[RMDB]
RNA sequence: GGGAACGACUCGAGUAGAGUCGAAAAAAGUUGCAGAGGUGGUGCAAGAAACAAGAUAGGCUACUUAUCAAGUGCUUCAAAGCCAUCACGUUUCUGACGGACAAGAUAAGCUGCUUCUCUUCUACUAUAGCCCAAGACUGUUCGCAGUCUUGGGCUAAAAAGAAACAACAACAACAAC
Reactivity to DMS in 0.01 (KOAc 150mM, MgCl2 10mM, bicine 150mM(pH8.5), 24C), signal-to-noise 2, nucleotides 027 to 126: a100a050g000u030u020g000c080a020g000a030g000g000u000g010g030u000g100c070a100a010g000a000a030a000c000a280a210g000a000u000a110g020g000c040u060a000c000u000u030a190u000c240a030a020g000u000g000c160u030u010c190a090a150a000g000c040c020a010u000c040a060c300g030u040u030u000c000u030g010a130c180g020g000a280c010a110a050g000a050u040a020a070g000c000u000g000c000u000u000c000u000c090u000u000c000u000a060c040u000a140